Structure probing data (2A3 and DMS) for a 177-nucleotide construct. For 2A3, 2,301 sequencing reads were counted. For DMS the reverse transcriptase was MarathonRT. Values cover nucleotides 27 to 126. The reactions ran in a buffer of 150 mM KOAc, 10 mM MgCl2 and 150 mM bicine (pH 8.5), at 24 C.

[RMDB]
RNA sequence: GGGAACGACUCGAGUAGAGUCGAAAAGAAAGAACAAAGCACCUCGAAGACCCGUUUACACGGGCAACUAGUCAGUCUCGAGUGAGGUGCAAAAACGUGACUGACAAAAAGAAAAAGAAAAAGAAAACACCGCAGUAUUAUUCGUAAUACUGCGGUGAAAAGAAACAACAACAACAAC
Reactivity to 2A3 in 0.01 (KOAc 150mM, MgCl2 10mM, bicine 150mM(pH8.5), 24C), signal-to-noise 2, nucleotides 027 to 126: g050a020a090a000g030a060a000c030a080a100a000g010c000a000c000c000u050c000g050a140a060g230a300c010c000c000g000u050u110u070a090c110a010c020g000g010g040c000a020a020c080u080a020g040u010c000a000g000u000c050u020c060g120a060g090u150g050a000g000g000u000g000c000a000a020a000a000a000c040g000u000g010a000c000u010g020a000c040a000a090a000a000a000g100a030a080a040a000a000g080a000a050a080a050a000g070a020a100a000a000
Reactivity to DMS in 0.01 (KOAc 150mM, MgCl2 10mM, bicine 150mM(pH8.5), 24C), signal-to-noise 1, nucleotides 027 to 126: g020a020a180a050g010a280a050c040a150a120a070g030c020a000c000c000u020c020g000a220a150g000a280c000c000c000g000u000u000u080a160c250a090c010g000g020g000c120a020a140c190u040a050g010u010c020a000g000u020c000u000c010g000a060g050u000g000a050g000g000u020g000c000a030a060a020a180a020c000g010u000g010a000c000u010g000a020c020a130a100a030a010a180g020a070a160a050a110a020g060a040a010a060a070a080g000a140a060a120a160